An RNA of 207 nucleotides, treated with 2A3 and read out base by base. The reactions ran in a buffer of 150 mM KOAc, 10 mM MgCl2 and 150 mM bicine (pH 8.5), at 24 C. For 2A3 the reverse transcriptase was SuperScript II with manganese.
RNA sequence: GGGAACGACUCGAGUAGAGUCGAAAAACAGAAAAAAGGAGUUUAAAUUAGAUUUGCAAACGGACGGUACUAAAUACCGUCACUUUUACGUCUAACCUAUCGUUAACUCUGCAAAAAGAAAACAAGAAAAACAAGCGUGAGUUCGCUCACGCUUGAAGAAUCCAAGUAACUUCGGUUACUUGGAUUCAAAAGAAACAACAACAACAAC
Reactivity to 2A3 in 0.01 (KOAc 150mM, MgCl2 10mM, bicine 150mM(pH8.5), 24C), signal-to-noise 1, nucleotides 027 to 156: a000c020a010g130a000a110a000a000a010a050g060g060a110g020u140u210u190a060a110a080u060u030a020g020a080u080u140u240g040c100a070a020a000c030g020g000a000c030g010g030u040a000c080u260a090a150a190u060a010c000c000g000u000c010a040c020u020u020u000u040a020c000g020u000c020u020a080a080c010c010u040a120u100c080g020u000u050a000a000c000u000c030u130g000c090a140a000a070a000a000g050a030a020a000a010c090a030a050g180a130a160a050a010a020c000a000a000g020c000g000u000g000a000g000u050u090c190g000c030u000c000a000c000g000c000u000u000g000a000a010